[RMDB]
RNA sequence: GGGAACGACUCGAGUAGAGUCGAAAACUCAGGCCCCAUGUCUUGGGUCAUUCUGUGUUAGAAAUAAAGCUCAGCCUACGUAUAAGGAAGAACAGAGGGAAAGGGUCUCCCACUCAUGUCCACUUCUGGCAUUUUUCCUCCUCUAACUCCACUGGACAAAUGGGAAGAUUUUCGAAUCUUCCCAUUUAAAAGAAACAACAACAACAAC
Reactivity to DMS in 0.01 (KOAc 150mM, MgCl2 10mM, bicine 150mM(pH8.5), 24C), signal-to-noise 2, nucleotides 027 to 156: c020u000c040a100g000g000c040c000c020c030a200u000g000u000c060u000u010g030g040g070u000c030a050u010u010c050u000g010u030g010u010u000a110g000a080a090a130u020a050a080a130g030c050u000c050a050g000c020c030u010a070c100g020u010a120u010a110a070g020g030a050a050g020a090a080c050a050g000a070g010g000g010a090a070a100g000g030g010u000c060u000c020c010c070a200c040u020c050a100u010g010u000c040c040a080c060u010u000c040u010g020g000c070a140u000u000u000u000u000c020c020u000c010c010u010c030u000a040a040c020u010c030c040a060c030u010g030g010a090c090
Reactivity to 2A3 in 0.01 (KOAc 150mM, MgCl2 10mM, bicine 150mM(pH8.5), 24C), signal-to-noise 3, nucleotides 027 to 156: c020u010c020a030g060g000c010c010c020c000a030u120g050u000c040u040u080g040g010g000u030c030a060u150u030c020u020g080u010g040u080u040a060g050a040a150a060u220a080a070a020g010c020u020c060a020g030c010c020u090a070c050g060u070a110u030a240a060g030g010a010a030g010a030a030c040a040g040a030g020g040g010a070a090a060g030g020g030u040c040u030c040c020c000a020c020u100c010a100u090g060u020c050c010a080c030u070u050c050u080g030g030c090a110u070u030u000u040u080c010c000u000c010c010u030c040u060a040a000c000u060c060c070a040c110u040g070g000a030c050

An RNA of 207 nucleotides, treated with DMS and 2A3 and read out base by base. For DMS the reverse transcriptase was MarathonRT. The reactions ran in a buffer of 150 mM KOAc, 10 mM MgCl2 and 150 mM bicine (pH 8.5), at 24 C. Values cover nucleotides 27 to 156. DMS (dimethyl sulfate) methylates the pairing face of unpaired adenines and cytosines. 2A3 adducts were read by reverse transcription with SuperScript II with manganese.